[RMDB]
An RNA of 177 nucleotides, treated with DMS and read out base by base.
RNA sequence: GGGAACGACUCGAGUAGAGUCGAAAAGAUAUGGAACCCGACGGAGAGGUGGACCGAGGUCGGAAACGAUACAGUCCACUACCCACCUCCCAAGGGUUCCUAAGUCAAACCCCUCUUCGGAGGGGAACUAUUCGAAGUACUUCGGUACUUCGAAUAGAAAAGAAACAACAACAACAAC
Reactivity to DMS in 0.01 (KOAc 150mM, MgCl2 10mM, bicine 150mM(pH8.5), 24C), signal-to-noise 3, nucleotides 027 to 126: g010a060u010a300u010g000g000a020a010c000c000c000g020a300c300g000g000a010g010a060g000g000u000g000g000a030c010c020g020a290g000g000u000c000g030g010a090a040a100c020g000a010u020a010c010a020g000u000c000c000a010c000u000a020c050c010c170a300c050c020u000c000c010c000a010a280g000g000g020u000u000c000c000u020a000a060g010u000c020a120a110a110c000c000c000c000u000c000u000u010c160g020g010a000g000g000g000g010a000a040